RNA sequence: GGGAACGACUCGAGUAGAGUCGAAAACAGCAAAUGGGGAGCAUACGAAGACCCAAAGAUGAUGAAAUGGCGAAAAGAGGUUACAGAUUAUAUCAUUCAAAACUACGAUGGGGACUAUUACGACGGUGCUAUAAAAGUAGAUGUAACUUUCUACAUGGGUUAAUACCCAAUUCGUUGGGUAUUAACCAAAAGAAACAACAACAACAAC
Reactivity to DMS in 0.01 (KOAc 150mM, MgCl2 10mM, bicine 150mM(pH8.5), 24C), signal-to-noise 3, nucleotides 027 to 156: c060a170g020c030a080a090a110u010g000g000g010g000a170g020c020a130u010a090c100g000a140a140g000a100c010c040c020a030a110a120g000a090u010g000a130u000g010a110a090a080u000g020g010c030g000a060a140a090a050g000a080g020g020u000u000a100c030a090g000a090u010u000a070u000a150u010c060a100u000u000c050a070a050a070a110c020u020a060c040g000a050u010g000g020g040g000a080c030u010a060u000u010a060c080g010a050c070g010g000u010g000c030u000a050u000a040a040a070a170g040u000a010g000a070u000g010u000a070a080c100u000u000u000c010u000a020c040a100u000g010
Reactivity to 2A3 in 0.01 (KOAc 150mM, MgCl2 10mM, bicine 150mM(pH8.5), 24C), signal-to-noise 4, nucleotides 027 to 156: c030a010g070c040a010a040a170u120g000g000g020g020a020g020c030a030u060a150c080g040a060a030g030a050c000c010c020a000a050a020g040a020u080g010a000u030g020a010a030a070u050g020g020c030g030a030a040a030a030g060a020g020g000u030u020a020c010a020g040a040u100u110a060u080a040u140c040a010u000u150c020a030a110a140a130c040u070a030c040g020a030u040g000g020g000g000a010c010u030a050u120u050a020c050g010a000c050g030g020u030g030c040u050a050u080a200a080a030a020g020u020a020g000a020u020g000u020a050a090c000u040u040u010c010u020a030c020a090u130g060